[RMDB]
RNA sequence: GGGAACGACUCGAGUAGAGUCGAAAAAAGUAUAAUAUGCGUGUGGAAGACUACGAACCUUACCCGGAUGAUGGCAUGGGGUAUGGCGACUACCCGAAGCUCCCUGACCGCUCACAGCAUGAGAGAGAUCCAUGGUAUAGCUGGGACCAGCCGGGCCCUGUAAAAGUGAAUUCGUUCACUUUUACAGAAAAGAAACAACAACAACAAC
Reactivity to 2A3 in 0.01 (KOAc 150mM, MgCl2 10mM, bicine 150mM(pH8.5), 24C), signal-to-noise 2, nucleotides 027 to 156: a000a010g180u190a190u120a180a120u170a080u170g030c030g000u070g000u050g070g010a080a030g020a040c050u080a060c100g100a070a090c020c040u090u080a060c030c010c000g050g040a090u090g020a030u080g040g000c060a050u100g000g000g000g000u070a070u080g040g010c030g050a050c030u060a050c000c010c020g020a020a020g020c020u040c000c000c000u030g060a100c030c030g040c020u010c000a070c010a020g080c020a020u060g010a040g000a000g000a000g010a220u000c000c010a040u050g000g040u050a080u090a090g030c040u070g010g000g040a060c020c000a000g010c000c000g050g000g000c000c030
Reactivity to DMS in 0.01 (KOAc 150mM, MgCl2 10mM, bicine 150mM(pH8.5), 24C), signal-to-noise 2, nucleotides 027 to 156: a030a070g010u000a070u000a060a070u000a060u010g000c040g030u020g040u000g030g000a100a080g000a100c040u000a080c030g000a100a050c040c050u000u000a110c020c030c040g050g030a060u000g020a110u000g020g030c030a120u000g020g010g000g020u000a040u010g020g030c030g020a100c050u000a100c010c020c020g000a080a130g010c040u000c010c010c000u010g010a060c010c030g000c020u000c050a060c060a090g000c060a300u000g010a160g030a060g020a130g000a080u000c020c050a040u000g020g040u000a070u000a130g000c050u010g030g030g010a060c020c020a040g060c040c060g010g020g010c050c150